[RMDB]
RNA sequence: GGGAACGACUCGAGUAGAGUCGAAAAGGCCACGAUGACGCAUCAGGCGUGACAGCUCGAGGGCUUUCUUACGCAGCUCAACUGCGUCUGUUUUGAUAUCGAAUACGCCAAAAAUUGAACACAUAACGCCUGAAAUCAGAUUCGUCUGAUUUCAGGCAAAAGAAACAACAACAACAAC
Reactivity to DMS in 0.01 (KOAc 150mM, MgCl2 10mM, bicine 150mM(pH8.5), 24C), signal-to-noise 2, nucleotides 027 to 126: g010g000c000c070a130c050g020a110u000g020a090c080g000c040a080u010c070a030g010g000c010g000u000g010a170c100a120g000c040u000c020g010a140g010g000g000c100u010u000u000c080u010u000a010c090g030c010a050g040c110u010c290a100a210c060u010g010c000g000u000c020u000g030u000u000u000u010g010a060u000a120u010c060g010a100a100u000a060c190g010c030c020a060a010a030a050a130u010u010g000a070a050c160a070c100a080u000a040a110c210
Reactivity to 2A3 in 0.01 (KOAc 150mM, MgCl2 10mM, bicine 150mM(pH8.5), 24C), signal-to-noise 1, nucleotides 027 to 126: g010g000c040c010a040c020g040a060u080g040a040c070g000c050a030u040c030a010g000g040c000g010u010g060a030c010a010g020c010u040c020g030a140g000g010g060c000u110u030u010c010u040u030a030c000g020c030a030g000c000u070c090a030a170c060u050g010c000g010u000c030u000g000u000u040u090u060g040a020u030a020u160c010g000a070a040u090a100c060g000c030c030a000a070a040a050a020u240u240g060a100a010c100a010c030a050u290a150a010c030

Structure probing data (DMS and 2A3) for a 177-nucleotide construct.
Conditions: 150 mM KOAc, 10 mM MgCl2 and 150 mM bicine (pH 8.5), 24 C.